[RMDB]
RNA sequence: GGGAACGACUCGAGUAGAGUCGAAAAGUCCUUAGUACGAGAGGACCGGGAUGGACACACCGCUGGUGUACCAGUUGUUCCGCCAGGAGCAUCGCUGGGUAGCUAUGUGUGGCAGGGAUAAACGCUGAAAGCAUCUAAGCGUGAAGCCCCCCUCAAGCUCGACAUAUUUGUUCGCAAAUAUGUCGAGAAAAGAAACAACAACAACAAC
Reactivity to 2A3 in 0.01 (KOAc 150mM, MgCl2 10mM, bicine 150mM(pH8.5), 24C), signal-to-noise 2, nucleotides 027 to 156: g020u030c000c000u070u060a090g030u140a100c090g020a090g010a050g160g030a010c050c040g060g030g180a120u170g090g030a040c010a000c010a000c000c010g010c050u020g010g010u040g080u260a020c000c000a000g000u010u010g000u010u010c010c010g030c130c090a110g030g000a010g000c020a040u080c060g020c050u010g000g000g010u060a000g000c000u020a060u210g010u000g010u020g000g000c050a020g000g030g000a010u020a070a050a020c010g010c020u020g060a090a020a090g140c000a020u090c060u080a020a010g000c000g010u000g020a080a020g000c000c000c020c000c000c000u010c000a050a070g000
Reactivity to DMS in 0.01 (KOAc 150mM, MgCl2 10mM, bicine 150mM(pH8.5), 24C), signal-to-noise 1, nucleotides 027 to 156: g000u000c010c010u000u000a090g110u000a110c180g020a260g030a020g000g000a060c020c010g000g000g080a060u000g050g050a140c010a080c030a060c050c030g040c010u000g000g070u000g000u000a300c030c000a000g020u000u000g000u010u000c000c000g000c100c300a150g030g010a060g000c000a050u000c130g030c000u000g000g000g040u030a300g040c010u000a050u000g010u000g020u010g010g010c060a090g000g000g020a130u000a120a200a040c000g060c000u010g000a130a060a140g060c120a010u000c030u000a190a120g010c010g050u000g000a120a050g020c010c000c010c000c030c010u000c010a050a130g030
Notes: The record gives the reactivity of an RNA of 207 nucleotides to 2A3 and DMS. The DMS profile rests on 1,352 reads. 2A3 adducts were read by reverse transcription with SuperScript II with manganese. DMS adducts were read by reverse transcription with MarathonRT. Conditions: 150 mM KOAc, 10 mM MgCl2 and 150 mM bicine (pH 8.5), 24 C.